[RMDB]
RNA sequence: GGGAACGACUCGAGUAGAGUCGAAAAACAUCUCUGCUGCUCUGCAGUACAUUGCCUGCUGGAUCUCUGGACAGGGCGCUGUGGCUGUGAACAACCUGAUGGAAGACGCGGCUACUGCUGAGAUCUCAGGUUGAGCUACAUUCGUGUAGCUCAACCUAAAAGAAACAACAACAACAAC
Reactivity to DMS in 0.01 (KOAc 150mM, MgCl2 10mM, bicine 150mM(pH8.5), 24C), signal-to-noise 2, nucleotides 027 to 126: a140c170a120u010c050u000c000u000g000c030u000g020c040u010c180u010g010c010a020g020u000a100c150a100u010u010g000c030c030u000g030c130u030g020g000a050u000c040u000c020u010g020g000a120c080a080g000g000g000c110g000c050u010g020u000g050g010c030u010g000u000g020a070a090c120a080a290c010c020u010g020a130u010g020g000a030a190g000a280c050g020c020g020g000c010u000a050c010u010g000c030u040g010a060g010a020u000c000u010c140
Reactivity to 2A3 in 0.01 (KOAc 150mM, MgCl2 10mM, bicine 150mM(pH8.5), 24C), signal-to-noise 2, nucleotides 027 to 126: a000c060a120u050c010u010c000u030g000c010u010g000c010u030c100u300g020c020a010g010u020a020c030a130u030u220g030c010c000u040g040c010u050g050g000a040u010c070u010c010u070g030g040a020c000a030g000g000g000c020g000c030u010g010u020g070g000c020u000g010u030g150a250a030c010a010a040c000c040u190g130a140u280g040g020a030a000g000a010c020g010c020g030g000c000u020a050c000u030g000c000u040g010a020g000a050u030c040u020c020